[RMDB]
RNA sequence: GGGAACGACUCGAGUAGAGUCGAAAAGCCACGCUAUUCGUAGCGUGGCGGUUAAGAUCUAGACAAAAACUGACUAAAAGUCUAGAUCAAAUAAAGUCAGAACGGUCCGGGAUUUCGAUCCCGGAAAUUCAGAGAAUGGUUUCGACCAUUCUCUGAAAAAAGAAACAACAACAACAAC
Reactivity to DMS in 0.01 (KOAc 150mM, MgCl2 10mM, bicine 150mM(pH8.5), 24C), signal-to-noise 2, nucleotides 027 to 126: g000c000c000a000c020g000c000u000a040u010u000c160g040u000a000g030c000g030u010g010g030c000g000g020u020u000a170a150g010a030u010c000u000a000g010a010c000a090a100a160a140a090c020u000g000a010c010u000a100a100a150a160g000u000c010u010a000g010a020u000c030a050a050a030u010a060a080a120g010u000c000a020g000a160a150c250g010g000u000c000c000g020g000g000a030u000u010u020c190g000a040u000c000c000c000g010g000a000a040a010

The data come from the RNA Mapping Database (RMDB), library M2PK50. Structure probing data (DMS) for a 177-nucleotide construct. For DMS, 1,022 sequencing reads were counted. The reactions ran in a buffer of 150 mM KOAc, 10 mM MgCl2 and 150 mM bicine (pH 8.5), at 24 C. DMS (dimethyl sulfate) methylates the pairing face of unpaired adenines and cytosines.